Structure probing data (2A3 and DMS) for a 177-nucleotide construct.
For DMS, 1,149 sequencing reads were counted.
Reactivities are given for positions 27 through 126.
For 2A3 the reverse transcriptase was SuperScript II with manganese.
Conditions: 150 mM KOAc, 10 mM MgCl2 and 150 mM bicine (pH 8.5), 24 C.
Source: RMDB library OK2TRN, as collected in RNAgym.
[RMDB]
RNA sequence: GGGAACGACUCGAGUAGAGUCGAAAAGGUGGUGCCAUUCGACCGGACAUCGUAUUAUACGGUGAAAUGUUAGAUCAACCUACCAUCAUAAGGGCAUUAAAUAAAAUUGAACAUGCUGACACCCUUGCCUAAUGCGUCGAUUCGUCGACGCAUUAGGAAAAGAAACAACAACAACAAC
Reactivity to 2A3 in 0.01 (KOAc 150mM, MgCl2 10mM, bicine 150mM(pH8.5), 24C), signal-to-noise 2, nucleotides 027 to 126: g030g000u030g010g020u040g090c000c000a050u020u030c020g000a070c040c000g060g010a020c020a030u020c030g060u030a090u300u080a100u200a050c020g030g010u010g020a030a040a040u110g000u050u060a060g020a080u050c020a000a060c000c010u060a040c000c060a070u040c000a020u070a180a050g020g010g000c050a040u010u200a020a070a080u190a040a140a040a030u070u060g020a040a020c050a050u030g030c020u020g030a020c020a110c040c010c000u020u130g070
Reactivity to DMS in 0.01 (KOAc 150mM, MgCl2 10mM, bicine 150mM(pH8.5), 24C), signal-to-noise 2, nucleotides 027 to 126: g000g030u000g010g020u020g000c090c110a040u020u000c070g000a040c030c080g010g020a300c040a000u020c030g040u000a070u010u000a140u000a020c020g030g000u000g010a040a240a150u020g010u030u000a030g040a130u000c080a100a100c130c020u000a030c000c060a080u000c030a130u000a030a060g000g000g000c080a030u000u000a050a020a170u000a010a010a080a210u020u010g000a110a100c150a040u050g000c020u000g000a140c110a130c000c010c010u030u000g000